[RMDB]
RNA sequence: GGGAACGACUCGAGUAGAGUCGAAAAACGGUCAUAUACGUAUGACCGAAUGAGCAUAACAGGCCCACCCCAAAGCGUUCACAUUGUGGCCCCUGUCAGAUUCUGGUAAAUCUGCGAGUUCUGCUAAAUUAGGUAACUCUCUUCGGAGAGUUACCAACUAUUGUCUUUACUUCGGUAAAGACAAUAGAAAAGAAACAACAACAACAAC
Reactivity to DMS in 0.01 (KOAc 150mM, MgCl2 10mM, bicine 150mM(pH8.5), 24C), signal-to-noise 2, nucleotides 027 to 156: a090c070g010g010u010c000a000u000a060u000a080c220g060u000a020u000g010a020c020c010g010a040a020u000g010a100g050c050a110u000a110a170c100a150g000g020c030c000c030a050c020c010c020c010a080a100a150g000c040g000u000u000c030a110c040a160u010u000g030u000g000g000c010c030c050c040u020g030u000c000a030g010a040u000u010c040u000g020g020u000a060a030a020u000c000u000g020c050g010a080g010u000u010c110u000g010c040u010a050a040a170u000u000a120g030g020u000a000a020c000u000c000u000c010u010u000c300g020g000a010g020a060g000u000u000a000c000c000a000a020
Reactivity to 2A3 in 0.01 (KOAc 150mM, MgCl2 10mM, bicine 150mM(pH8.5), 24C), signal-to-noise 3, nucleotides 027 to 156: a000c010g000g000u010c010a000u040a000u030a070c180g090u040a010u010g000a000c000c000g000a020a090u060g010a000g020c030a050u080a140a050c020a020g020g000c000c000c010a040c010c010c000c020a060a140a040g080c040g070u140u180c050a060c040a150u060u200g020u080g050g040c010c000c000c020u040g020u030c000a020g020a060u060u040c040u220g040g010u070a060a020a060u020c010u020g020c020g020a050g040u060u050c050u040g020c020u090a090a120a140u220u140a110g000g000u000a000a000c000u000c010u000c030u050u070c160g010g000a000g000a000g010u000u000a000c000c000a000a000